[RMDB]
Source information:
Chemical mapping of a 177-nucleotide RNA with DMS and 2A3. The RNA was probed in 150 mM KOAc, 10 mM MgCl2 and 150 mM bicine (pH 8.5) at 24 C. DMS adducts were read by reverse transcription with MarathonRT. Source: RMDB library TTRDES, as collected in RNAgym.

RNA sequence: GGGAACGACUCGAGUAGAGUCGAAAAGAUAUGGAAAUGCAGCUUUUGACGAGCGCAUAUCGGAAACGAUAUGGCUCGAUAAGCUGGUUUCCUAAGUCAAAUCCGCACGACUUCGGUCGUGCGGAAACGAUACCAAUUUGUUCGCAAAUUGGUAUCGAAAAGAAACAACAACAACAAC
Reactivity to DMS in 0.01 (KOAc 150mM, MgCl2 10mM, bicine 150mM(pH8.5), 24C), signal-to-noise 1, nucleotides 027 to 126: g000a010u000a150u010g000g000a010a010a000u000g030c010a010g010c000u000u000u000u020g040a230c100g000a010g020c010g000c010a010u000a010u000c010g020g000a060a010a050c000g010a020u000a010u000g000g010c000u000c000g000a040u000a010a010g010c000u000g000g000u010u000u000c000c010u010a020a110g000u000c000a150a130a180u000c020c000g030c010a010c000g000a010c000u020u030c290g000g000u000c000g040u000g000c000g000g000a000a010a030
Reactivity to 2A3 in 0.01 (KOAc 150mM, MgCl2 10mM, bicine 150mM(pH8.5), 24C), signal-to-noise 3, nucleotides 027 to 126: g000a020u030a000u100g020g160a030a030a040u300g300c010a010g000c030u110u240u300u300g300a300c080g000a010g000c260g000c300a000u010a000u000c000g010g000a010a020a000c010g000a000u000a000u000g000g030c010u000c000g030a050u050a040a000g030c000u000g000g000u000u010u010c020c030u000a020a000g010u000c010a000a000a240u010c010c020g010c000a010c000g080a020c000u080u190c300g140g010u030c000g020u000g000c000g000g000a040a010a000